[RMDB]
An RNA of 207 nucleotides, treated with 2A3 and read out base by base. Values cover nucleotides 27 to 156. It was measured as part of the RMDB library OK3TST.
RNA sequence: GGGAACGACUCGAGUAGAGUCGAAAAACGGCCUCCAGAUGGGACCGUCCAGCAGCGCCCAAACUUGGCGACUCGGGUUCACGUUUUGCGCUCAGGACGCCGCCCGCGGCUGACAUCCUCACUCCACCCUAGCAGGGCCCGCCUUAAGUAGGCGAAGCACGAGCCUUAAGUUCGCUUAAGGCUCGUGAAAAGAAACAACAACAACAAC
Reactivity to 2A3 in 0.01 (KOAc 150mM, MgCl2 10mM, bicine 150mM(pH8.5), 24C), signal-to-noise 1, nucleotides 027 to 156: a000c010g020g010c060c040u150c180c040a060g080a120u220g030g030g030a060c010c060g010u000c000c000a020g000c080a010g000c000g000c000c050c100a010a010a030c100u080u050g010g040c070g130a180c090u100c270g170g040g060u180u080c010a000c070g000u020u040u000u070g000c000g000c000u000c020a040g000g000a040c010g150c110c010g110c000c000c000g040c030g000g000c000u040g000a070c000a070u050c000c020u060c080a090c010u080c030c020a000c000c000c000u040a030g070c060a060g000g000g000c030c000c020g030c000c000u090u160a170a050g110u100a080g100g000c000g000a000a010g020